Source information: Chemical mapping of a 207-nucleotide RNA with 2A3. The data come from the RNA Mapping Database (RMDB), library M2RFPK. Conditions: 150 mM KOAc, 10 mM MgCl2 and 150 mM bicine (pH 8.5), 24 C. Values cover nucleotides 27 to 156. 2A3 adducts were read by reverse transcription with SuperScript II with manganese.
RNA sequence: GGGAACGACUCGAGUAGAGUCGAAAAAGUUUCUCGAUAAUUGAUCUGUAGAAUCUGUCAAGCAAAACCCCAAAACCUUACACUGAGAGCAUUUAGCCUGAUUACUCUGUAAAUCAAAUCAGGCAAUUCAAGGUCGCAGUCUUCGGACUGCGACCAAGAUGAAGUUUAUCUUCGGAUAAACUUCAUCAAAAGAAACAACAACAACAAC
Reactivity to 2A3 in 0.01 (KOAc 150mM, MgCl2 10mM, bicine 150mM(pH8.5), 24C), signal-to-noise 2, nucleotides 027 to 156: a000g020u030u050u010c050u000c020g020a120u150a300a200u140u110g070a030u060c050u080g120u110a030g010a100a030u010c050u050g090u100c060a030a030g010c060a090a100a090a150c000c000c000c060a060a130a070a110c050c040u150u110a060c100a040c130u150g030a020g000a000g040c010a030u000u040u060a020g000c000c010u000g000a000u010u010a010c010u010c050u160g070u190a000a010a020u190c120a000a000a010u000c000a000g010g000c020a050a000u040u010c010a030a070g000g030u000c000g000c000a000g010u030c010u050u060c100g060g000a000c000u000g030c000g000a000c000c000a000a000